[RMDB]
RNA sequence: GGGAACGACUCGAGUAGAGUCGAAAACAUUGUUCUGAUCAUCUGAAGAUCAGCUAUUAGAAGAGAAAGAUCAGUUAAGUCCUUUGGACCUGAUCAGCUUGAUACAAGAACUACUGACUUCAACUUCAAAACGGGUGCUACUUCGGUAGCACCCGAACUCUCCCGUUAAGUUCGCUUAACGGGAGAGAAAAGAAACAACAACAACAAC
Reactivity to 2A3 in 0.01 (KOAc 150mM, MgCl2 10mM, bicine 150mM(pH8.5), 24C), signal-to-noise 2, nucleotides 027 to 156: c070a050u110u070g030u150u020c040u050g020a080u060c040a040u030c070u130g100a190a090g010a100u010c000a000g010c020u070a120u240u130a060g040a150a010g010a020g020a050a240a000g020a080u000c010a000g000u050u210a220a000g000u010c000c020u100u130u270g000g000a000c020c030u020g020a050u030c020a000g000c000u050u100g020a000u070a210c050a040a100g050a070a020c010u100a020c000u100g050a010c010u010u020c070a110a020c050u190u110c060a000a040a150a130c040g000g030g000u000g040c050u020a020c020u040u060c140g030g000u000a010g010c000a000c010c000c000g010a000a000